[RMDB]
Chemical mapping of a 177-nucleotide RNA with DMS and 2A3.
RNA sequence: GGGAACGACUCGAGUAGAGUCGAAAAGAGGGGUAAGUGGUAAAGAGCAUUGGAACGUCGGAGGAAGCCCCCCAAGAAGGAAAAAAGAGAAAGCAAGAAUCGGAGACUCUCCCCAUGACGCUGGAGACUUGGUAAGAUAGUUCGCUAUCUUACCAAGAAAAGAAACAACAACAACAAC
Reactivity to DMS in 0.01 (KOAc 150mM, MgCl2 10mM, bicine 150mM(pH8.5), 24C), signal-to-noise 3, nucleotides 027 to 126: g010a050g010g030g010g000u020a070a070g030u020g010g010u010a060a090a100g010a100g020c070a060u000u010g010g010a050a110c110g050u010c080g020g000a060g010g010a110a130g020c030c010c010c010c010c030a090a090g000a040a080g000g000a010a040a050a090a110a070g010a090g020a070a040a060g000c070a070a050g010a040a080u010c070g000g010a080g000a090c090u000c050u000c020c000c010c070a080u000g000a050c150g030c070u000g000g000a090g010a100
Reactivity to 2A3 in 0.01 (KOAc 150mM, MgCl2 10mM, bicine 150mM(pH8.5), 24C), signal-to-noise 1, nucleotides 027 to 126: g040a000g000g010g000g010u040a120a030g030u030g090g040u110a130a170a030g040a020g060c040a060u130u120g070g010a140a030c040g030u050c040g050g020a020g030g020a040a010g030c000c000c010c000c020c020a060a060g060a030a020g010g030a070a150a000a050a000a020g080a010g000a010a050a000g010c020a000a020g030a100a010u050c050g010g000a050g030a020c030u000c030u010c040c020c000c000a020u160g010a020c030g010c050u010g000g020a070g000a060
As a SHAPE reagent, 2A3 marks flexible, mostly unpaired nucleotides at the ribose 2'-OH. DMS adducts were read by reverse transcription with MarathonRT.